The record gives the reactivity of an RNA of 177 nucleotides to 2A3 and DMS. It was measured as part of the RMDB library TTRDES. The DMS profile rests on 2,098 reads. Conditions: 150 mM KOAc, 10 mM MgCl2 and 150 mM bicine (pH 8.5), 24 C.
RNA sequence: GGGAACGACUCGAGUAGAGUCGAAAAGAUAUGGAGCGGUAAGGGAGCUGGCCAUCGGAAACGAUGGCAGCGAAGAACUUACCCGCUCCUAAGUCAAAAGCCGUAACAGGUUCGCCUGUUACGGCAAGUUAUUGAGACUGUUCGCAGUCUCAAUAACAAAAGAAACAACAACAACAAC
Reactivity to 2A3 in 0.01 (KOAc 150mM, MgCl2 10mM, bicine 150mM(pH8.5), 24C), signal-to-noise 1, nucleotides 027 to 126: g030a000u020a020u080g000g000a000g000c020g020g000u040a030a000g050g140g140a170g030c000u060g240g300c010c000a000u010c000g010g040a050a000a000c010g030a000u000g020g000c020a000g000c010g000a030a030g060a060a000c000u010u010a000c010c030c010g000c000u010c000c000u000a030a010g000u000c030a100a090a150a050g000c050c010g000u010a000a000c020a010g040g100u090u120c220g170c060c000u030g000u000u010a010c010g000g000c000a000a000
Reactivity to DMS in 0.01 (KOAc 150mM, MgCl2 10mM, bicine 150mM(pH8.5), 24C), signal-to-noise 2, nucleotides 027 to 126: g000a020u000a160u010g000g000a010g040c020g000g030u000a010a000g010g010g030a270g030c000u000g010g030c000c000a030u000c010g020g000a030a040a060c010g000a010u000g000g000c010a000g010c000g010a150a170g050a130a100c010u000u000a010c070c060c090g030c000u000c000c000u010a000a040g000u010c030a140a130a110a160g000c000c000g010u000a000a000c010a030g020g040u000u010c300g000c000c000u000g000u000u000a000c010g000g030c020a000a010